The record gives the reactivity of an RNA of 177 nucleotides to 2A3.
RNA sequence: GGGAACGACUCGAGUAGAGUCGAAAAGUUAUUAGGCAUGGCUUUAACACAAGAGACAGGCCCUGAAAUAGAAGGCAGUUUCAAAUUAUGGAUAGGUUUCGAGGGCAUCUUCAAGUCAAACUGCUCCGCCCUAUCGUCCGUUCGCGGACGAUAGGGCAAAAGAAACAACAACAACAAC
Reactivity to 2A3 in 0.01 (KOAc 150mM, MgCl2 10mM, bicine 150mM(pH8.5), 24C), signal-to-noise 1, nucleotides 027 to 126: g060u170u080a190u070u080a000g060g040c000a010u010g010g000c000u030u000u090a170a030c120a000c110a180a000g000a000g080a000c000a130g000g300c000c000c000u080g300a300a000a000u100a100g130a000a010g080g090c000a000g000u010u010u010c110a180a260a160u100u060a180u000g080g000a000u070a000g090g090u040u160u110c140g070a080g010g010g020c040a000u000c080u000u000c050a180a000g120u260c000a070a030a030c080u000g000c040u200c070c000